[RMDB]
RNA sequence: GGGAACGACUCGAGUAGAGUCGAAAAUCUUUGCUGACUUAGCUCACUUGCCACCCAGGAAGUUCUCUGAAUAGUUUUAAGUUGCAUACCCCACUAUGCUUCCAGUAGAGGACAGUCAUACCGCCGGAGUCUCAGAAAAAUUCGUUUUUCUGAGACUAAAAGAAACAACAACAACAAC
Reactivity to DMS in 0.01 (KOAc 150mM, MgCl2 10mM, bicine 150mM(pH8.5), 24C), signal-to-noise 6, nucleotides 027 to 126: u000c050u000u000u000g010c080u000g000a050c050u010u000a120g000c030u010c070a080c070u000u010g010c040c030a090c050c040c030a090g000g010a080a100g010u000u000c020u000c030u000g010a090a100u010a100g010u020u010u010u000a060a140g020u010u000g000c030a050u000a090c080c010c020c030a080c190u000a030u000g000c020u000u010c010c030a090g020u000a060g010a090g000g000a040c080a050g010u000c040a070u000a100c070c030g010c050c060g020g000
Reactivity to 2A3 in 0.01 (KOAc 150mM, MgCl2 10mM, bicine 150mM(pH8.5), 24C), signal-to-noise 2, nucleotides 027 to 126: u020c030u110u040u090g020c010u040g050a090c020u060u060a010g030c020u000c020a060c040u030u090g070c020c000a040c020c020c020a000g040g020a030a030g020u040u010c040u000c010u060g100a120a130u130a180g070u040u070u110u200a130a060g010u020u030g000c010a020u050a090c020c030c010c010a030c020u030a020u060g030c010u050u000c020c020a020g020u030a030g110a010g010g020a010c000a000g010u010c000a020u040a070c000c020g110c110c030g030g040
Source information
An RNA of 177 nucleotides, treated with DMS and 2A3 and read out base by base. For 2A3, 2,304 sequencing reads were counted. It was measured as part of the RMDB library OK2TST. Conditions: 150 mM KOAc, 10 mM MgCl2 and 150 mM bicine (pH 8.5), 24 C. The DMS profile rests on 7,122 reads.